[RMDB]
RNA sequence: GGGAACGACUCGAGUAGAGUCGAAAAACAUGGUUCGCCAUGUAACGCAGCGUACUACGUAGUGAUGGUAGCGAGGAUCCUACCCACCAGGUCCCAAAUAGGACCUGAGGGGGAGCUACCAUCAUUACGUAUCGCAUAGAACACGUUUCGACGUGAAGUAGUGUCCCUAUUUCGAUAGGGACACUACAAAAGAAACAACAACAACAAC
Reactivity to 2A3 in 0.01 (KOAc 150mM, MgCl2 10mM, bicine 150mM(pH8.5), 24C), signal-to-noise 4, nucleotides 027 to 156: a000c000a010u010g010g050u090u120c210g040c070c000a000u050g020u080a110a040c070g020c200a080g010c020g040u100a080c050u010a000c060g000u000a000g010u000g020a010u000g000g000u000a000g000c030g030a110g060g170a060u060c010c020u070a300c040c030c010a050c020c000a010g010g000u040c030c010c020a210a300a120u300a100g000g010a000c000c000u010g010a050g010g000g000g010g000a030g010c010u000a000c010c000a000u000c000a000u000u000a000c010g020u000a000u050c000g000c000a010u060a070g090a050a010c030a000c020g000u090u170u150c210g130a040c030g040u060g060a150a040
Reactivity to DMS in 0.01 (KOAc 150mM, MgCl2 10mM, bicine 150mM(pH8.5), 24C), signal-to-noise 2, nucleotides 027 to 156: a080c000a060u000g010g010u000u010c290g000c030c000a090u000g010u020a050a020c030g000c000a120g020c010g010u000a080c110u000a010c030g000u000a030g030u000g000a040u000g020g000u010a020g000c030g030a240g030g010a110u020c100c060u000a150c010c000c000a060c000c000a040g030g020u000c000c010c020a040a140a180u030a020g000g030a020c000c010u000g000a030g010g010g010g000g020a210g010c000u000a010c000c000a010u010c000a000u000u000a000c000g000u000a000u020c030g070c060a200u000a120g010a050a180c010a020c030g000u000u000u000c150g020a070c060g000u020g000a050a160

Conditions: 150 mM KOAc, 10 mM MgCl2 and 150 mM bicine (pH 8.5), 24 C. The record gives the reactivity of an RNA of 207 nucleotides to 2A3 and DMS. Reactivities are given for positions 27 through 156. For DMS the reverse transcriptase was MarathonRT. Values are in units of 0.01, from 0 to 300, in steps of 10.